[RMDB]
RNA sequence: GGGAACGACUCGAGUAGAGUCGAAAAAUAGCUAUAACCAACACGGAUGUGUACCGCGUUCAGGGCGCCAUCCAUCGCCGCUUCGGAAGUGAUAUAGCUUGGCCAUGCCGGCGGCCAUAUCGCAGCACGUAGUGGGGUCAUUCGUGACCCCACUACGAAAAGAAACAACAACAACAAC
Reactivity to DMS in 0.01 (KOAc 150mM, MgCl2 10mM, bicine 150mM(pH8.5), 24C), signal-to-noise 2, nucleotides 027 to 126: a060u010a030g020c030u000a010u010a050a180c080c100a140a110c100a000c050g000g020a050u010g000u010g050u010a140c010c020g000c110g000u010u020c150a190g020g020g020c000g000c040c020a000u000c040c060a070u000c080g020c050c010g010c130u010u020c070g010g000a140a010g010u000g010a150u000a030u000a080g000c030u010u000g030g030c020c030a120u000g000c020c060g000g020c070g020g030c010c030a020u000a030u010c040g010c030a170g010c090a160
Reactivity to 2A3 in 0.01 (KOAc 150mM, MgCl2 10mM, bicine 150mM(pH8.5), 24C), signal-to-noise 1, nucleotides 027 to 126: a020u090a010g040c000u030a000u010a120a060c050c040a040a060c010a000c090g040g040a020u040g080u000g030u140a130c050c000g150c040g130u020u130c100a150g000g010g080c010g000c030c000a010u000c020c020a000u030c050g010c010c000g070c040u120u040c020g050g040a060a070g050u060g100a010u010a020u020a050g000c000u000u070g070g000c010c020a020u110g040c050c000g010g010c050g030g000c020c040a000u040a000u080c030g020c030a010g050c030a040